[RMDB]
RNA sequence: GGGAACGACUCGAGUAGAGUCGAAAAGCGUAAGCAAAAAUGUGAUCUUGCUUGUAAAUACAAUUUUGAGAGGUUAAUGAAUUACAAGUAGCGCUAUUUUUGUCCCUCUCUGCAAUAGACAGCCAAAAUAUAUCCACCUCUUCGGAGGUGGAUAUAUAAAAGAAACAACAACAACAAC
Reactivity to DMS in 0.01 (KOAc 150mM, MgCl2 10mM, bicine 150mM(pH8.5), 24C), signal-to-noise 2, nucleotides 027 to 126: g020c050g010u030a060a090g000c060a000a010a030a040a010u010g000u030g000a120u000c030u000u020g000c000u000u000g000u010a000a010a080u030a100c070a080a080u030u000u000u020g000a020g000a040g000g020u000u050a060a060u030g010a260a030u010u000a000c020a050a030g000u010a090g000c050g000c020u020a000u000u000u010u030u010g000u020c090c010c010u010c040u030c000u000g020c070a040a050u020a100g000a120c110a130g010c070c130a030a040a060
Reactivity to 2A3 in 0.01 (KOAc 150mM, MgCl2 10mM, bicine 150mM(pH8.5), 24C), signal-to-noise 3, nucleotides 027 to 126: g030c010g020u080a020a050g030c040a000a020a020a020a070u110g040u030g070a060u080c090u070u090g000c000u000u010g000u010a020a030a000u180a070c060a120a100u040u070u100u060g120a100g000a030g110g040u090u280a080a060u230g070a030a020u030u030a010c000a020a020g000u020a010g020c000g000c090u050a040u010u090u010u040u050g020u010c000c010c020u000c000u010c010u010g040c030a070a100u030a060g080a050c020a000g100c040c010a090a080a130